[RMDB]
RNA sequence: GGGAACGACUCGAGUAGAGUCGAAAAUAGAAUGGAUCGUUACUAGUGGGCCAUUUUUGGUAAGCAGAACUGGCGAUGCGGGAUGAACCGAACGCGAGGUUAAGGUGCCGGAAUGCACGCUCAUCAGAAAUGUGAUCAAAUUCGUUUGAUCACAUUUAAAAGAAACAACAACAACAAC
Reactivity to DMS in 0.01 (KOAc 150mM, MgCl2 10mM, bicine 150mM(pH8.5), 24C), signal-to-noise 9, nucleotides 027 to 126: u030a060g010a100a060u010g000g010a090u000c050g010u010u010a140c050u010a080g030u000g010g000g010c020c020a030u000u000u000u010u010g040g010u010a050a090g010c050a120g010a050a080c030u000g000g010c020g010a050u020g010c020g000g000g010a180u010g010a110a160c020c010g010a040a070c050g020c040g000a060g010g010u000u010a070a110g000g010u000g000c020c020g000g010a040a040u010g000c130a050c120g000c010u000c040a030u020c110a080g000
Reactivity to 2A3 in 0.01 (KOAc 150mM, MgCl2 10mM, bicine 150mM(pH8.5), 24C), signal-to-noise 9, nucleotides 027 to 126: u180a020g120a050a060u110g060g060a060u070c050g030u080u110a070c050u030a060g050u060g020g020g010c010c010a060u020u020u010u040u120g040g000u040a070a030g100c020a030g030a100a030c010u040g050g000c010g030a060u190g040c030g000g030g040a170u200g070a120a060c000c020g010a030a010c000g010c030g050a060g020g000u040u060a080a020g050g010u010g010c000c000g020g030a040a000u050g030c060a010c080g010c010u020c010a080u030c010a020g120